An RNA of 177 nucleotides, treated with DMS and 2A3 and read out base by base. It was measured as part of the RMDB library OK1LIB. High DMS reactivity at an A or C suggests that its Watson-Crick edge is free. DMS adducts were read by reverse transcription with MarathonRT. The RNA was probed in 150 mM KOAc, 10 mM MgCl2 and 150 mM bicine (pH 8.5) at 24 C.

RNA sequence: GGGAACGACUCGAGUAGAGUCGAAAAGAAACGAAGGUUGGGUAAUACUGGUCGGACAUCAGGAGGUUAGUGCAAUCACAUAAGCCAGCUUGACAACAAAAAGGAAAAAGAAAGAAGAAAAAGAAAAAUUAGUGAGGUACUUCGGUACCUCACUAAUAAAAGAAACAACAACAACAAC
Reactivity to DMS in 0.01 (KOAc 150mM, MgCl2 10mM, bicine 150mM(pH8.5), 24C), signal-to-noise 2, nucleotides 027 to 126: g020a050a020a000c140g010a120a060g000g020u000u000g000g000g000u010a050a100u010a120c050u000g020g020u000c100g040g000a030c020a080u040c040a050g020g050a020g030g010u040u000a030g030u000g010c070a030a060u070c070a050c120a130u010a070a080g000c010c020a010g000c010u080u030g010a060c160a050a100c110a010a040a040a110a030g000g000a000a020a100a090a070g010a110a000a080g000a070a000g010a010a010a020a070a150g010a000a050a010a110
Reactivity to 2A3 in 0.01 (KOAc 150mM, MgCl2 10mM, bicine 150mM(pH8.5), 24C), signal-to-noise 1, nucleotides 027 to 126: g000a000a090a000c100g070a090a000g100g050u000u110g020g000g010u020a010a000u000a140c000u030g030g000u070c030g070g050a000c000a140u080c130a080g140g000a000g020g050u100u110a000g000u000g050c000a030a040u040c030a000c000a040u060a050a000g060c000c000a000g000c030u030u050g050a000c000a060a000c010a210a170a090a090a000g080g020a030a000a070a000a000g120a000a090a020g020a050a000g040a000a010a060a070a030g230a080a110a010a070